Structure probing data (2A3 and DMS) for a 177-nucleotide construct. Reactivities are given for positions 27 through 126. 2A3 adducts were read by reverse transcription with SuperScript II with manganese. Values are in units of 0.01, from 0 to 300, in steps of 10. Source: RMDB library OK1LIB, as collected in RNAgym. Conditions: 150 mM KOAc, 10 mM MgCl2 and 150 mM bicine (pH 8.5), 24 C.
[RMDB]
RNA sequence: GGGAACGACUCGAGUAGAGUCGAAAAGAAACUAGGAAAAGUCAGCUAUGACGAAUAGCGAAGGCGCUAACAGCCGAAGUUAGCAAAGGGGAUCUGACCCGAACAGAUCGAACUAGGAAAUAAGAAAGGGUAUGUAUAUCUUCGGAUAUACAUACCCAAAAGAAACAACAACAACAAC
Reactivity to 2A3 in 0.01 (KOAc 150mM, MgCl2 10mM, bicine 150mM(pH8.5), 24C), signal-to-noise 4, nucleotides 027 to 126: g090a050a080a040c040u120a040g150g080a110a060a040a100g100u070c060a010g020c000u000a000u040g050a070c100g040a130a000u020a010g000c020g040a130a070g050g010c030g040c010u020a000a010c030a020g060c010c100g040a030a000g000u010u040a000g000c010a030a160a110g060g000g050g000a020u000c020u020g140a230c000c000c020g000a020a000c000a000g010a000u020c020g030a060a030c020u000a020g030g170a050a040a090u300a110a060g160a130a070a090
Reactivity to DMS in 0.01 (KOAc 150mM, MgCl2 10mM, bicine 150mM(pH8.5), 24C), signal-to-noise 4, nucleotides 027 to 126: g020a130a100a100c030u010a010g000g000a050a090a100a120g030u010c040a210g000c030u010a000u010g000a140c200g000a150a040u010a010g000c010g040a180a080g020g010c090g020c010u000a020a020c060a050g000c150c110g050a110a080g010u010u000a010g000c020a090a060a100g010g020g020g000a050u000c000u010g000a100c050c020c070g000a060a190c010a010g000a010u000c010g000a060a110c020u020a010g010g000a090a090a110u010a070a100g030a080a090a100